Chemical mapping of a 177-nucleotide RNA with 2A3 and DMS. Source: RMDB libraries RFM100 and RFMREP, as collected in RNAgym. The reactions ran in a buffer of 150 mM KOAc, 10 mM MgCl2 and 150 mM bicine (pH 8.5), at 24 C.
[RMDB]
RNA sequence: GGGAACGACUCGAGUAGAGUCGAAAAGAGAGCGGACCGAGGCUCCGGCACUCUCUGCCCUGACUGCGCCGGUGCCUCCAGUGGCCGGGGGCACCGCACACCGCCGGCCAGGUAGCUCCGGGCUGCGGAACCUACUUUGAUUCGUCAAAGUAGGUUCAAAAGAAACAACAACAACAAC
Reactivity to 2A3 in 0.01 (KOAc 150mM, MgCl2 10mM, bicine 150mM(pH8.5), 24C), signal-to-noise 7, nucleotides 027 to 126: g050a000g000a010g030c060g020g060a070c030c080g040a060g090g010c070u020c040c000g030g000c010a060c040u010c000u010c010u030g030c010c000c000u040g090a100c050u050g010c060g040c040c020g000g000u010g000c000c000u010c000c000a160g060u100g030g010c010c000g010g000g000g000g000c090a040c030c030g000c000a010c000a000c010c010g150c020c000g000g000c010c000a000g010g020u040a010g000c010u010c010c020g000g050g000c040u060g000c030g020
Reactivity to DMS in 0.01 (KOAc 150mM, MgCl2 10mM, bicine 150mM(pH8.5), 24C), signal-to-noise 7, nucleotides 027 to 126: g000a020g000a020g010c070g010g010a080c030c060g010a110g000g010c100u010c040c000g000g010c060a240c000u000c020u010c010u010g000c050c010c010u010g010a120c090u010g010c050g000c020c010g010g000u000g000c010c010u000c000c020a070g020u020g000g000c000c010g000g000g000g010g010c050a030c030c030g000c080a030c100a210c030c010g010c010c020g000g010c000c000a090g000g010u020a170g000c040u010c010c020g010g000g000c020u010g010c050g000